RNA sequence: GGGAACGACUCGAGUAGAGUCGAAAAUGAUUUAUAUGUUCGCAGUGUAGCAUUUAGUCCUGAUGGUAAAUACCUUGCUACUGGUGUCGAAGAUCAACAAAUCAGAAUAUGGGACAUCGCUCAAAAACGUGUUUAUCGUCUACUGACUGGGCAUGAAGCUAGGGUGAGGAUUCGUCCUCACCCUAGCAAAAGAAACAACAACAACAAC
Reactivity to 2A3 in 0.01 (KOAc 150mM, MgCl2 10mM, bicine 150mM(pH8.5), 24C), signal-to-noise 2, nucleotides 027 to 156: u060g040a000u000u140u090a140u090a050u080g060u040u040c020g000c010a050g040u060g020u250a010g010c030a040u150u070u120a120g040u000c020c050u060g050a140u080g000g000u000a020a090a000u050a000c010c010u010u030g020c050u120a120c020u080g000g000u000g050u030c050g060a050a020g030a030u030c080a030a130c030a020a050a070u040c030a040g000a100a070u100a100u190g040g040g030a010c000a030u050c050g070c090u060c150a120a090a000a000a050c010g000u000g060u020u020u000a040u030c010g000u000c010u050a080c050u040g080a050c030u000g000g040g000c010a010u040g110a060a000